[RMDB]
This 177-nucleotide RNA was probed chemically with DMS and 2A3. The DMS profile rests on 1,305 reads. Conditions: 150 mM KOAc, 10 mM MgCl2 and 150 mM bicine (pH 8.5), 24 C.
RNA sequence: GGGAACGACUCGAGUAGAGUCGAAAAGAUAUGGACCGGCAAGGGAGCUGGUCGGAAACGACGCAGCGAAGAACUUGCGGUCCUAAGUCAAAACAAGAACACUUACGUUCGCGUAAGUGUUCUUGAACCUGUUCACAGGGUUCGCCCUGUGAACAGGAAAAGAAACAACAACAACAAC
Reactivity to DMS in 0.01 (KOAc 150mM, MgCl2 10mM, bicine 150mM(pH8.5), 24C), signal-to-noise 2, nucleotides 027 to 126: g000a020u000a300u010g000g000a000c010c000g020g010c000a020a040g000g000g000a100g000c000u010g000g010u020c000g010g020a110a070a120c000g000a020c000g010c000a030g030c020g000a070a180g030a070a160c010u000u000g010c000g000g030u000c000c000u000a010a060g010u000c020a100a060a070a150c020a000a020g000a000a000c000a000c000u000u000a000c020g010u010u010c210g000c020g030u000a010a000g010u000g000u000u000c020u000u010g020a060a100
Reactivity to 2A3 in 0.01 (KOAc 150mM, MgCl2 10mM, bicine 150mM(pH8.5), 24C), signal-to-noise 2, nucleotides 027 to 126: g000a000u060a030u160g020g000a020c000c020g290g200c000a000a000g040g000g010a010g030c000u020g020g000u010c000g000g030a030a060a010c040g030a010c150g000c300a000g010c010g230a290a030g030a020a030c000u000u000g000c010g010g000u020c000c000u000a050a000g010u000c040a040a030a080a140c040a000a000g000a010a000c000a000c000u000u010a020c000g020u040u050c300g000c010g180u000a000a010g010u000g000u040u010c000u010u000g000a000a010